Source information: The record gives the reactivity of an RNA of 177 nucleotides to 2A3 and DMS. The DMS profile rests on 2,129 reads. The data come from the RNA Mapping Database (RMDB), library OK1LIB. For 2A3 the reverse transcriptase was SuperScript II with manganese. DMS (dimethyl sulfate) methylates the pairing face of unpaired adenines and cytosines. The RNA was probed in 150 mM KOAc, 10 mM MgCl2 and 150 mM bicine (pH 8.5) at 24 C. For DMS the reverse transcriptase was MarathonRT.
RNA sequence: GGGAACGACUCGAGUAGAGUCGAAAAGUAGUCGAGCUUUCAUACUCUUUUGAGUAUGUUUAGAUCUCGUUGUCGUGGAAGAGAUCUAGCCCGCGACAAGUCUUUUGACUAAGCUCUUGACUACGAAGGGUAACACAUUCUUCGGAAUGUGUUACCCAAAAGAAACAACAACAACAAC
Reactivity to 2A3 in 0.01 (KOAc 150mM, MgCl2 10mM, bicine 150mM(pH8.5), 24C), signal-to-noise 3, nucleotides 027 to 126: g000u000a000g000u010c030g010a000g000c010u010u020u040c010a000u000a010c000u020c010u050u190u260u300g010a000g000u000a000u000g000u020u020u050a010g000a070u050c070u070c130g180u030u000g020u010c010g000u010g010g030a120a100g090a070g000a140u070c070u100a070g080c010c000c000g010c000g010a000c000a010a000g040u040c090u030u150u150u210g050a070c040u030a000a010g010c010u010c000u060u240g000a000c000u010a000c000g000a020a040
Reactivity to DMS in 0.01 (KOAc 150mM, MgCl2 10mM, bicine 150mM(pH8.5), 24C), signal-to-noise 1, nucleotides 027 to 126: g000u000a010g000u000c000g030a010g020c040u010u000u020c030a000u000a000c000u000c000u020u000u040u110g000a010g010u000a000u000g000u000u110u040a040g000a010u010c110u000c080g000u010u000g000u030c030g000u040g020g030a190a200g010a120g000a050u040c090u020a230g050c060c040c030g000c080g000a010c100a030a020g000u000c000u000u020u000u050g000a000c100u000a000a020g010c000u030c020u000u000g000a020c000u000a000c040g000a030a150